Chemical mapping of a 177-nucleotide RNA with 2A3 and DMS. Values cover nucleotides 27 to 126.
[RMDB]
RNA sequence: GGGAACGACUCGAGUAGAGUCGAAAACAGGGUAGAUAACACUGGCACGGGCGUAGGAGUUUCUCCACGCCCGUGCACGCAUGUCAGGGGCAGAUAAAACAUGAAAAGUCUACGCUUCGGCGUAGACGGGUUGAAUAAACUUCGGUUUAUUCAACCCAAAAGAAACAACAACAACAAC
Reactivity to 2A3 in 0.01 (KOAc 150mM, MgCl2 10mM, bicine 150mM(pH8.5), 24C), signal-to-noise 1, nucleotides 027 to 126: c020a020g030g000g050u060a020g060a160u080a140a030c030a020c110u070g060g010c010a000c000g000g010g040c030g030u050a190g040g040a010g020u050u110u130c070u030c020c000a010c020g010c040c040c030g000u010g010c000a000c010g010c000a010u040g040u060c040a010g030g060g000g000c000a020g010a080u140a060a100a020a000c030a040u060g070a010a060a050a090g000u000c010u000a010c000g020c000u020u010c160g090g000c000g000u000a010g000a000c000
Reactivity to DMS in 0.01 (KOAc 150mM, MgCl2 10mM, bicine 150mM(pH8.5), 24C), signal-to-noise 2, nucleotides 027 to 126: c100a060g000g000g030u000a100g010a080u010a080a080c070a070c080u020g010g020c000a030c000g010g020g000c000g030u010a090g040g010a010g030u000u020u020c020u010c010c020a020c010g010c000c000c000g030u010g010c040a020c120g000c090a030u000g020u000c050a060g000g010g000g010c080a030g010a070u000a040a090a060a090c160a040u010g000a110a070a030a110g010u000c000u000a010c000g010c010u000u030c220g020g000c000g020u000a000g000a000c010